RNA sequence: GGGAACGACUCGAGUAGAGUCGAAAAUUCCAUUUGAGUAUCCUGAAAACGGGCUUUUCACCAUGGAACGUACAUAUUAAAUAGUAGGAGUGCAUAGUGGCCCGUAUAGCAGGCAUUAACAUUCCUGAAAACGUGAAAAGGUUCGCCUUUUCACGAAGCGGUUUAGAUAGUUCGCUAUCUAAACCGCAAAAGAAACAACAACAACAAC
Reactivity to 2A3 in 0.01 (KOAc 150mM, MgCl2 10mM, bicine 150mM(pH8.5), 24C), signal-to-noise 1, nucleotides 027 to 156: u120u010c010c020a040u190u100u150g040a050g040u210a050u040c000c010u000g030a080a000a000a000c030g040g000g010c020u200u190u190u220c050a000c020c010a080u050g070g030a130a050c020g080u200a050c030a060u240a010u250u300a110a180a140u180a040g090u060a010g030g050a090g040u010g080c000a010u030a080g030u060g010g070c000c000c060g000u010a040u000a040g000c030a030g000g030c000a010u020u030a060a000c000a020u050u120c000c000u050g040a090a180a000a000c000g000u000g000a000a000a000a010g000g000u010u010c080g050c000c000u000u000u000u000c000a030c010g000a000a010